[RMDB]
RNA sequence: GGGAACGACUCGAGUAGAGUCGAAAAACGAGUCCGUACGCGGACUCGAAGGGCCCCAGAAGACCAAGGGGCCCAAACCUACCACUCAUUAGAUGCAUGAAAAUCACUAGGUGAUACGUCACCUAGAACACGCUUUUAAGCUUCGGCUUAAAAGCAACUAUGAUAAGACGUUCGCGUCUUAUCAUAGAAAAGAAACAACAACAACAAC
Reactivity to DMS in 0.01 (KOAc 150mM, MgCl2 10mM, bicine 150mM(pH8.5), 24C), signal-to-noise 1, nucleotides 027 to 156: a050c010g000a000g000u000c000c010g000u000a110c240g060c070g050g010a010c030u000c000g010a020a100g000g020g020c010c000c000c000a200g020a130a150g000a120c090c080a140a240g000g000g090g000c010c010c000a010a040a040c030c040u010a140c050c010a050c040u000c040a140u000u010a050g010a070u000g000c080a140u000g000a030a110a100a140u000c090a200c000u000a000g000g000u000g000a060u000a050c240g000u000c000a000c000c010u010a000g000a040a080c120a070c130g020c000u000u010u000u000a020a000g010c000u010u010c300g040g010c000u020u020a000a010a010a000g040c010a020a020
Reactivity to 2A3 in 0.01 (KOAc 150mM, MgCl2 10mM, bicine 150mM(pH8.5), 24C), signal-to-noise 5, nucleotides 027 to 156: a010c000g000a000g000u020c010c000g020u020a030c240g000c010g070g000a000c000u010c000g000a000a010g000g000g000c020c010c000c000a110g050a300a020g060a100c060c080a140a080g000g000g000g040c010c000c000a010a000a000c010c000u040a040c020c040a060c050u090c020a060u020u200a050g080a150u150g060c080a040u130g160a050a030a030a150u120c040a040c080u010a000g000g000u010g000a010u020a030c210g060u030c000a010c000c000u000a000g000a010a010c060a010c080g000c000u010u000u000u000a000a010g000c000u010u090c200g090g000c000u000u000a000a000a000a000g000c000a000a010

Chemical mapping of a 207-nucleotide RNA with DMS and 2A3. For DMS the reverse transcriptase was MarathonRT. The data come from the RNA Mapping Database (RMDB), library M2RFPK. For DMS, 2,590 sequencing reads were counted. 2A3 adducts were read by reverse transcription with SuperScript II with manganese. Values are in units of 0.01, from 0 to 300, in steps of 10. Conditions: 150 mM KOAc, 10 mM MgCl2 and 150 mM bicine (pH 8.5), 24 C.